[RMDB]
Chemical mapping of a 177-nucleotide RNA with DMS and 2A3.
RNA sequence: GGGAACGACUCGAGUAGAGUCGAAAACGCAGUCGCUUCGGCGACUGCGAAAGAAAGCAGGAAAAAGGGAAUAAAUAAUGGGUAACGUGCACCCACCAAUAAAAACGUCAGCGUUCGCGCUGACGAACUAACUAUGGAUGUUCGCAUCCAUAGUUAGAAAAGAAACAACAACAACAAC
Reactivity to DMS in 0.01 (KOAc 150mM, MgCl2 10mM, bicine 150mM(pH8.5), 24C), signal-to-noise 3, nucleotides 027 to 126: c030g010c020a010g040u010c010g060c000u000u010c160g030g020c000g010a010c000u000g050c000g010a000a050a080g000a090a070a070g000c030a020g020g000a010a020a030a090a040g000g000g000a130a100u020a070a070a080u020a100a060u000g000g020g010u000a110a080c120g010u010g000c120a070c010c000c000a050c160c100a050a090u000a040a030a070a060a110c020g000u000c000a000g020c010g020u010u020c190g020c020g010c000u000g000a010c000g010a000a070
Reactivity to 2A3 in 0.01 (KOAc 150mM, MgCl2 10mM, bicine 150mM(pH8.5), 24C), signal-to-noise 4, nucleotides 027 to 126: c010g000c010a000g000u030c010g020c060u130u120c230g080g000c010g000a010c000u000g010c010g010a000a000a000g030a020a030a000g020c050a030g060g080a030a040a000a020a010g070g000g030a100a050u100a160a180a040u200a100a100u090g020g010g030u040a100a060c060g080u080g050c030a010c010c000c000a020c030c020a070a070u210a150a060a010a000a010c010g000u010c000a000g010c000g040u050u070c160g000c000g000c080u000g000a000c000g000a010a010

Background:
DMS adducts were read by reverse transcription with MarathonRT. The DMS profile rests on 3,414 reads. Source: RMDB library M2PK50, as collected in RNAgym. The RNA was probed in 150 mM KOAc, 10 mM MgCl2 and 150 mM bicine (pH 8.5) at 24 C. 2A3 adducts were read by reverse transcription with SuperScript II with manganese. 2A3 is a SHAPE reagent: it acylates the 2'-hydroxyl of flexible nucleotides of all four kinds.